[RMDB]
RNA sequence: GGGAACGACUCGAGUAGAGUCGAAAAAAGCUGUGCGGAUCACUGAUUGGAAUGACCAAUAGGGCCACCUGGGCCUCCCACAUCCAUUUAGUCAUCCAUCGUAUCCGAACGCUGAUUGGACAGGAGAAUCGUAUACGAUAUUCGUAUCGUAUACGAUAAAAGAAACAACAACAACAAC
Reactivity to DMS in 0.01 (KOAc 150mM, MgCl2 10mM, bicine 150mM(pH8.5), 24C), signal-to-noise 9, nucleotides 027 to 126: a100a010g010c010u010g070u000g010c010g000g000a010u000c180a020c020u010g020a020u000u010g030g010a090a040u000g010a020c010c100a040a050u010a150g010g010g010c030c020a110c180c160u010g010g020g010c030c020u000c040c020c020a080c150a080u010c070c060a120u000u000u000a060g000u000c010a020u000c000c000a040u000c010g010u000a040u000c010c000g000a030a020c020g010c010u000g000a200u000u000g000g000a100c100a080g000g000a140g010a110
Reactivity to 2A3 in 0.01 (KOAc 150mM, MgCl2 10mM, bicine 150mM(pH8.5), 24C), signal-to-noise 7, nucleotides 027 to 126: a000a000g080c110u120g020u030g020c010g010g010a010u050c090a080c080u240g020a050u120u190g040g010a250a110u020g010a010c010c010a040a050u100a190g010g000g010c020c010a080c070c130u100g090g020g010c010c020u040c020c020c000a080c020a060u060c070c010a030u070u070u080a010g000u000c000a010u000c010c000a000u010c010g010u010a010u000c010c000g000a010a000c010g000c010u010g010a080u050u140g070g030a030c060a060g050g110a090g120a090